[RMDB]
An RNA of 177 nucleotides, treated with 2A3 and read out base by base. The data come from the RNA Mapping Database (RMDB), library OK1LIB. The 2A3 profile rests on 385 reads.
RNA sequence: GGGAACGACUCGAGUAGAGUCGAAAAGUACGGCGUACUGCGUCUCUUUGCCUUCGUCAACGGCGACGCCGCGGAGGCUGCGGCGCAGCACAAAGAUGCCGCCCCAGACGGCGGAGAUGCGGCACAAACUCCGGGUCGGUUUCGACCGACCCGGAGUAAAAGAAACAACAACAACAAC
Reactivity to 2A3 in 0.01 (KOAc 150mM, MgCl2 10mM, bicine 150mM(pH8.5), 24C), signal-to-noise 1, nucleotides 027 to 126: g080u040a090c070g000g020c120g000u000a030c030u000g000c000g030u050c040u000c000u080u180u170g000c000c000u000u070c010g000u070c050a230a120c010g040g070c090g170a300c300g000c020c000g020c000g030g000a050g000g000c040u000g000c000g000g060c040g000c040a000g000c000a000c000a030a120a000g130a040u220g000c000c000g010c000c010c010c010a180g080a090c080g030g080c030g040g000a000g000a080u030g020c050g020g020c020a000c000a010a100